Description:
The record gives the reactivity of an RNA of 177 nucleotides to 2A3 and DMS. For 2A3 the reverse transcriptase was SuperScript II with manganese. The DMS profile rests on 1,973 reads. Values cover nucleotides 27 to 126. Conditions: 150 mM KOAc, 10 mM MgCl2 and 150 mM bicine (pH 8.5), 24 C.

RNA sequence: GGGAACGACUCGAGUAGAGUCGAAAAAUUAGCAUAUUAUCCUCGAUCCCACAUGGGCUAAUUGCAUGGUGAAGGACACUAUAUGCUGAAUUCAACUCCAUGGUGGAAGAACCUGAGGCAUACUCACAGCAUGGUAAAACUUCGGUUUUACCAUGCUAAAAGAAACAACAACAACAAC
Reactivity to 2A3 in 0.01 (KOAc 150mM, MgCl2 10mM, bicine 150mM(pH8.5), 24C), signal-to-noise 3, nucleotides 027 to 126: a010u060u050a000g010c020a020u040a030u150u060a040u050c010c020u020c030g050a110u080c000c000c000a030c020a060u070g080g040g020c020u090a090a080u130u100g010c010a010u030g000g050u060g030a160a110g120g050a060c020a020c090u080a080u020a020u260g000c020u020g030a060a100u090u170c050a070a040c020u020c020c010a030u100g110g000u100g060g020a140a060g030a080a050c000c050u060g010a020g000g000c020a100u140a120c010u020c030a060c030
Reactivity to DMS in 0.01 (KOAc 150mM, MgCl2 10mM, bicine 150mM(pH8.5), 24C), signal-to-noise 3, nucleotides 027 to 126: a050u000u000a060g000c010a030u000a030u010u010a040u010c000c000u000c050g000a190u010c040c010c020a130c100a030u000g010g000g020c070u010a050a040u010u010g030c050a030u000g000g010u010g010a180a070g020g000a150c140a050c160u000a030u000a060u000g000c020u000g010a100a090u000u000c120a020a120c060u010c000c020a050u000g010g000u000g010g010a090a110g000a050a060c110c100u000g010a040g010g040c180a060u010a080c050u000c010a130c210

For 2A3, 2,079 sequencing reads were counted.